This 177-nucleotide RNA was probed chemically with DMS. Reactivities are given for positions 27 through 126. DMS adducts were read by reverse transcription with MarathonRT. For DMS, 1,310 sequencing reads were counted. High DMS reactivity at an A or C suggests that its Watson-Crick edge is free. The RNA was probed in 150 mM KOAc, 10 mM MgCl2 and 150 mM bicine (pH 8.5) at 24 C.
RNA sequence: GGGAACGACUCGAGUAGAGUCGAAAAGAUAUGGAGCCUCAGGUCGCUACAGGCGUUGAAAGGAUAAAUGUCCUCGGAAACGAGGACAUUUAUCCUGGAGCCUGUAAAAGUCCUGGGCUCCUAAGUCCCUGUGUAUCAUGUUCGCAUGAUACACAGGAAAAGAAACAACAACAACAAC
Reactivity to DMS in 0.01 (KOAc 150mM, MgCl2 10mM, bicine 150mM(pH8.5), 24C), signal-to-noise 1, nucleotides 027 to 126: g010a110u000a240u010g000g010a020g020c000c020u030c020a000g020g010u000c000g020c300u000a020c000a010g020g020c000g040u010u030g000a200a170a030g000g000a000u000a010a000a040u000g000u030c000c000u000c020g020g010a060a110a280c000g020a050g030g000a010c010a000u000u000u000a000u000c010c020u000g020g000a070g000c000c000u040g020u000a000a090a130a160g010u000c000c000u000g000g000g030c000u000c000c000u000a000a070g020u000c030